[RMDB]
RNA sequence: GGGAACGACUCGAGUAGAGUCGAAAAGAUAUGGAUCCUUUGAGGGAGAAUACUCGGAAACGAGAAUUCAUCGAUCUCAUGGGAUCCUAAGUCAAAACACAUGACUGUCUUCGGACAGUCAUGUGAACCUAAUCUGUCUCUUCGGAGACAGAUUAGGAAAAGAAACAACAACAACAAC
Reactivity to DMS in 0.01 (KOAc 150mM, MgCl2 10mM, bicine 150mM(pH8.5), 24C), signal-to-noise 2, nucleotides 027 to 126: g000a030u000a230u000g000g000a010u000c000c000u000u010u000g000a030g020g010g000a060g000a020a000u000a100c000u000c010g010g010a080a050a110c000g020a020g000a110a010u000u010c010a210u010c120g000a080u000c000u000c000a010u000g000g000g020a000u000c000c000u000a010a060g000u000c010a050a070a070a220c020a020c000a010u000g010a030c000u000g010u010c000u000u020c200g020g000a020c010a000g000u000c000a000u000g010u000g000a050a120
Reactivity to 2A3 in 0.01 (KOAc 150mM, MgCl2 10mM, bicine 150mM(pH8.5), 24C), signal-to-noise 2, nucleotides 027 to 126: g020a000u050a030u110g020g000a010u020c010c000u000u020u040g030a050g050g260g000a030g010a030a000u040a110c000u010c000g020g020a050a020a020c010g010a010g010a030a020u030u020c030a130u210c130g050a080u060c000u000c000a010u000g010g000g000a000u000c000c000u000a020a000g020u000c020a020a010a060a120c000a000c000a010u010g010a000c000u000g000u000c020u060u090c260g080g000a030c030a000g000u000c000a000u000g000u000g000a000a010